[RMDB]
RNA sequence: GGGAACGACUCGAGUAGAGUCGAAAAUCUAUCACCAGCCCAUGUUUACGACACGAUUGGGCUGUUGCAAAUUACGUAUAGCUCUUGCAACAUCGUGUCGAAACGUUCCCAAGCUAUACGCCACAAAUCUUGACGUGAUAUUCGUAUCACGUCAAGAAAAAGAAACAACAACAACAAC
Reactivity to DMS in 0.01 (KOAc 150mM, MgCl2 10mM, bicine 150mM(pH8.5), 24C), signal-to-noise 3, nucleotides 027 to 126: u000c040u000a100u020c080a140c090c040a030g000c010c010c030a290u010g000u010u000u010a100c030g030a030c000a010c000g000a040u020u020g020g000g020c090u010g000u000u010g010c070a040a060a150u040u010a170c040g010u000a010u000a010g000c010u000c140u000u000g000c060a040a050c070a000u020c000g000u000g010u010c010g000a050a070a260c070g000u000u000c000c000c000a120a030g000c030u000a010u000a030c030g000c170c220a100c170a030a040a100
Reactivity to 2A3 in 0.01 (KOAc 150mM, MgCl2 10mM, bicine 150mM(pH8.5), 24C), signal-to-noise 3, nucleotides 027 to 126: u020c010u010a100u100c050a030c070c010a020g000c020c000c000a060u090g070u050u170u100a060c030g000a000c000a000c010g020a030u080u100g060g050g000c040u000g020u030u020g000c020a000a040a080u240u100a060c020g000u020a030u010a020g010c000u020c010u170u150g050c020a060a070c000a050u050c020g020u020g010u020c000g020a150a080a000c050g020u000u000c020c000c000a010a000g000c000u000a000u000a030c000g010c030c010a160c010a040a060a040

Annotation
An RNA of 177 nucleotides, treated with DMS and 2A3 and read out base by base. The reactions ran in a buffer of 150 mM KOAc, 10 mM MgCl2 and 150 mM bicine (pH 8.5), at 24 C. 2A3 adducts were read by reverse transcription with SuperScript II with manganese. Reactivities are rounded to 0.1 and cut off at 0 and 3. Values cover nucleotides 27 to 126.